[RMDB]
RNA sequence: GGGAACGACUCGAGUAGAGUCGAAAAGAUAUGGAACCUCUUGACGUAAGGACCUCAGGGAGUCCGUAUUCGGAAACGAAUACUGGACGAAGAACUGAGGGUCCUUACGUCAAGAGGUUCCUAAGUCGAUUUGUGUAAUCUUCGGAUUACACAAAUCAAAAGAAACAACAACAACAAC
Reactivity to DMS in 0.01 (KOAc 150mM, MgCl2 10mM, bicine 150mM(pH8.5), 24C), signal-to-noise 1, nucleotides 027 to 126: g010a090u000a300u000g020g010a000a000c000c000u000c000u010u010g010a040c000g000u000a000a020g000g000a300c010c000u020c000a010g010g010g020a070g000u000c000c020g000u000a000u010u010c000g000g010a130a060a180c000g010a030a010u000a000c010u070g050g000a020c000g020a080a230g000a140a230c000u000g000a050g000g010g000u020c000c000u000u000a000c000g010u000c000a030a000g000a000g000g000u000u000c000c000u000a010a040g030u000c110